An RNA of 177 nucleotides, treated with 2A3 and DMS and read out base by base.
[RMDB]
RNA sequence: GGGAACGACUCGAGUAGAGUCGAAAAUGGAUCCAUGCAGUAUCAUGCUAGGCUAGGAUCCAUGUAUACGACAUGGUACUACUGGUACCUCUAGCUGCGGAUCCACAUGAUGACUAGCUAGGGAUCGCUGAGACGACCAUUUCGAUGGUCGUCUCAGAAAAGAAACAACAACAACAAC
Reactivity to 2A3 in 0.01 (KOAc 150mM, MgCl2 10mM, bicine 150mM(pH8.5), 24C), signal-to-noise 1, nucleotides 027 to 126: u050g050g000a020u000c010c010a010u100g000c000a000g020u070a020u150c050a040u110g060c050u110a060g130g000c030u050a020g030g040a010u030c020c000a000u030g000u040a120u010a070c150g060a090c090a110u110g040g000u050a030c020u060a070c020u050g060g020u060a050c000c020u000c000u030a040g000c010u000g050c080g000g020a020u050c050c010a020c010a050u110g030a010u050g070a000c010u030a060g030c020u020a050g080g010g030a040u060c020g000
Reactivity to DMS in 0.01 (KOAc 150mM, MgCl2 10mM, bicine 150mM(pH8.5), 24C), signal-to-noise 2, nucleotides 027 to 126: u000g000g000a020u000c000c000a200u020g030c000a050g000u000a030u010c070a040u000g010c050u000a300g000g020c070u010a100g000g000a040u000c010c000a010u000g040u020a060u000a050c110g010a140c220a090u000g000g000u000a040c110u000a060c080u010g010g000u010a030c080c030u000c000u000a080g000c020u000g010c210g020g000a080u010c070c090a170c100a040u010g010a070u000g000a050c010u010a060g000c000u000a130g040g000g030a020u000c030g010
About this RNA
Source: RMDB library OK2TRN, as collected in RNAgym. High 2A3 reactivity points to a flexible backbone, as in loops and unpaired stretches. For 2A3 the reverse transcriptase was SuperScript II with manganese. For 2A3, 1,918 sequencing reads were counted.